[RMDB]
RNA sequence: GGGAACGACUCGAGUAGAGUCGAAAAAGAAAUAACGUGAAAAAGCAGAAGAAAGACUGCAAGGACACGAACCACCAAACAUCAAAAACAGCAAGAAAGAGCUGUAGGAGAUGAACCACCAAAAAAACAUGUAAUGCAAGUUCGCUUGCAUUACAUGAAAAGAAACAACAACAACAAC
Reactivity to DMS in 0.01 (KOAc 150mM, MgCl2 10mM, bicine 150mM(pH8.5), 24C), signal-to-noise 1, nucleotides 027 to 126: a070g020a050a050a060u020a000a300c050g050u020g000a060a070a270a300a110g000c000a050g050a130a030g030a080a050a130g000a050c000u020g020c010a020a030g020g000a300c020a000c000g000a050a140c030c020a190c080c100a100a080a150c030a000u000c000a040a110a180a200a020c070a000g020c010a120a050g000a010a090a120g000a060g020c020u000g060u000a050g000g000a300g000a000u000g000a050a170c120c080a020c090c150a000a000a050a050a060a020a030
Reactivity to 2A3 in 0.01 (KOAc 150mM, MgCl2 10mM, bicine 150mM(pH8.5), 24C), signal-to-noise 1, nucleotides 027 to 126: a020g070a000a150a010u090a110a000c010g000u040g050a040a020a020a000a060g010c030a000g040a240a040g140a110a280a000g110a030c000u000g010c020a060a040g080g000a010c000a000c010g010a070a050c000c030a030c020c050a080a060a020c010a010u050c020a060a000a120a000a000c010a000g000c010a000a190g080a300a140a030g110a050g020c010u010g000u030a000g000g090a050g000a000u020g000a020a020c050c020a010c020c040a050a170a030a000a000a000a070